[RMDB]
RNA sequence: GGGAACGACUCGAGUAGAGUCGAAAAGACAUCUUGCAUUUCGCAGAUUCCAUACUCAGUUACACUUGAAACCACUUAGUGAUGAUGAUGCCGUAUCCCUCUUCCAUCACUUUCGUAGAGGAGAUAACGCAGCACACUCGUUCGCGAGUGUGCUGCGAAAAGAAACAACAACAACAAC
Reactivity to 2A3 in 0.01 (KOAc 150mM, MgCl2 10mM, bicine 150mM(pH8.5), 24C), signal-to-noise 1, nucleotides 027 to 126: g090a020c040a160u020c110u080u130g090c000a060u140u140u000c110g000c000a000g000a090u000u000c000c000a120u180a120c020u120c120a000g000u190u110a140c120a050c060u070u070g110a000a090a090c000c070a140c000u090u180a000g050u050g000a000u000g000a110u300g020a000u050g090c050c020g000u090a180u000c050c000c000u060c000u010u010c020c040a040u110c000a090c090u020u000u120c070g000u000a040g000a090g230g020a130g030a000u160a070a090